[RMDB]
RNA sequence: GGGAACGACUCGAGUAGAGUCGAAAAAGGUGAAAAGAUCGCUCUUAAUUAGAUUAAAAACAUUGUUUUCUUCCUGUGUCAUUUUGCCCUGAAAAUCAAGGCCAAUUUUUUCCUUUCUUCAUCCAAAGUCCUGAUUCUAUUUCGAUAGAAUCAGGACAAAAGAAACAACAACAACAAC
Reactivity to 2A3 in 0.01 (KOAc 150mM, MgCl2 10mM, bicine 150mM(pH8.5), 24C), signal-to-noise 5, nucleotides 027 to 126: a000g090g010u060g040a070a060a010a000g070a070u090c010g030c030u070c020u110u100a130a110u090u090a070g100a140u100u220a060a060a020a020a020c040a060u060u080g050u030u060u010u010c000u030u030c000c010u030g010u020g030u050c040a080u030u060u090u100g030c000c010c010u030g040a110a060a020a020u100c070a050a010g030g010c010c030a040a070u030u020u000u000u010u080c020c000u060u050u010c010u070u050c010a110u010c010c020a110a000a000
Reactivity to DMS in 0.01 (KOAc 150mM, MgCl2 10mM, bicine 150mM(pH8.5), 24C), signal-to-noise 2, nucleotides 027 to 126: a060g020g010u000g000a000a060a070a070g000a050u010c120g020c050u000c030u000u000a050a050u020u000a120g040a150u050u010a000a080a100a090a090c030a030u000u000g000u020u020u000u020c030u000u000c000c000u010g020u000g010u050c070a060u000u000u000u000g020c080c020c020u000g000a070a050a040a070u020c080a030a060g010g010c020c020a030a000u020u000u040u000u010u000c010c030u000u020u000c030u010u000c110a030u040c020c050a070a050a130
Chemical mapping of a 177-nucleotide RNA with 2A3 and DMS. DMS adducts were read by reverse transcription with MarathonRT.